[RMDB]
RNA sequence: GGGAACGACUCGAGUAGAGUCGAAAAACGUCGUUAAUUGCCCGGCGUCGCUACCCGAUUCUGACAUUAAGUCAGGGGCGGAUGUCAGGAGCGCAUCAUGGCGAAUAAUAGUGCUGCGCAGAAAGCACAACAGGAACCAGUUCGCUGGUUCCUGUUGAAAAGAAACAACAACAACAAC
Reactivity to 2A3 in 0.01 (KOAc 150mM, MgCl2 10mM, bicine 150mM(pH8.5), 24C), signal-to-noise 1, nucleotides 027 to 126: a000c020g020u010c010g000u070u090a170a090u230u160g010c030c040c000g000g020c000g000u030c000g000c040u070a100c000c000c050g010a040u090u000c010u020g000a010c020a070u240u270a290a000g010u080c030a040g010g010g000g010c000g020g020a060u060g070u020c030a030g000g110a110g030c080g020c010a010u040c020a020u110g010g000c020g040a060a050u200a070a040u070a050g030u020g030c010u000g040c050g000c060a030g160a140a120a020g010c030a040
Reactivity to DMS in 0.01 (KOAc 150mM, MgCl2 10mM, bicine 150mM(pH8.5), 24C), signal-to-noise 2, nucleotides 027 to 126: a110c050g020u000c000g020u000u000a020a110u020u000g000c020c080c050g030g000c010g010u000c060g000c090u000a110c070c010c010g000a190u000u000c010u010g000a000c010a130u000u020a140a160g010u010c040a080g000g030g000g030c040g000g010a040u010g000u000c070a070g000g010a170g010c030g040c070a010u000c060a080u000g010g020c020g030a110a100u000a120a100u000a110g020u000g000c030u000g050c060g040c130a150g000a050a100a060g000c060a080